Notes:
This 177-nucleotide RNA was probed chemically with 2A3 and DMS. The reactions ran in a buffer of 150 mM KOAc, 10 mM MgCl2 and 150 mM bicine (pH 8.5), at 24 C. Values cover nucleotides 27 to 126.
RNA sequence: GGGAACGACUCGAGUAGAGUCGAAAAGCGCGUCGAUCGACGGCGUUAUGUCGCACGUGAUCGGCGUGCAGCUGGCCGAGAAUCACCGCGACAACGCCCUGCAGAUGUUCUAGGACACGUGGACAUGGCCCAGUCAUAUGUUCGCAUAUGACUGGGCAAAAGAAACAACAACAACAAC
Reactivity to 2A3 in 0.01 (KOAc 150mM, MgCl2 10mM, bicine 150mM(pH8.5), 24C), signal-to-noise 3, nucleotides 027 to 126: g000c020g020c000g010u010c000g000a030u010c050g210a020c000g020g050c010g040u050u090a280u250g270u170c000g000c030a080c070g010u000g000a010u000c000g000g000c000g010u000g000c000a010g000c020u060g050g030c000c030g040a040g090a080a110u060c030a020c040c060g030c010g060a020c020a100a030c010g040c000c000c000u060g010c030a030g040a160u060g040u120u040c010u080a060g050g060a050c040a000c110g030u030g050g000a020c030a070u070g080
Reactivity to DMS in 0.01 (KOAc 150mM, MgCl2 10mM, bicine 150mM(pH8.5), 24C), signal-to-noise 3, nucleotides 027 to 126: g010c000g000c020g030u010c000g010a010u000c010g010a070c020g000g030c000g010u010u010a080u010g010u010c000g000c000a090c050g010u000g000a020u000c010g020g000c000g030u000g010c020a050g010c050u010g000g010c020c050g000a120g040a120a100u000c080a070c050c020g020c040g010a070c080a070a160c120g000c020c010c030u000g030c070a060g030a070u020g010u040u000c090u000a130g010g000a090c080a050c100g020u020g010g000a060c070a060u010g000